[RMDB]
RNA sequence: GGGAACGACUCGAGUAGAGUCGAAAAGAAAACCGCGCAAGUCACACAAUCGCGCGGAUAUGGCACGCACGCUUCUGCCGGGCAACAUACAUGUCCGAUUGUGUCAAUGCGCGGAAAAGAAAGAAAACAUGGCAUGGUAGUUCGCUACCAUGCCAUGAAAAGAAACAACAACAACAAC
Reactivity to 2A3 in 0.01 (KOAc 150mM, MgCl2 10mM, bicine 150mM(pH8.5), 24C), signal-to-noise 2, nucleotides 027 to 126: g170a000a110a010a010c000c020g000c030g000c000a000a020g070u150c010a000c000a000c000a010a040u000c000g010c000g000c000g130g010a010u020a000u000g120g010c100a010c100g000c000a020c090g000c080u090u080c090u300g170c120c030g000g010g000c000a050a070c000a000u110a010c030a020u090g020u030c000c000g000a000u000u000g000u000g020u000c000a000a060u010g000c000g040c010g000g000a010a000a000a000g030a000a030a020g070a000a010a000a010
Reactivity to DMS in 0.01 (KOAc 150mM, MgCl2 10mM, bicine 150mM(pH8.5), 24C), signal-to-noise 2, nucleotides 027 to 126: g000a210a100a150a080c000c010g030c000g030c000a030a020g000u010c300a020c000a060c000a000a000u000c050g020c300g030c110g000g000a000u000a000u000g000g000c070a090c130g000c080a060c000g000c030u020u110c230u050g040c220c020g000g000g000c000a120a010c030a040u000a060c150a210u030g000u000c160c000g000a000u000u000g040u000g000u010c000a080a140u000g000c050g000c000g000g000a030a010a140a070g050a050a040a150g030a120a020a010a180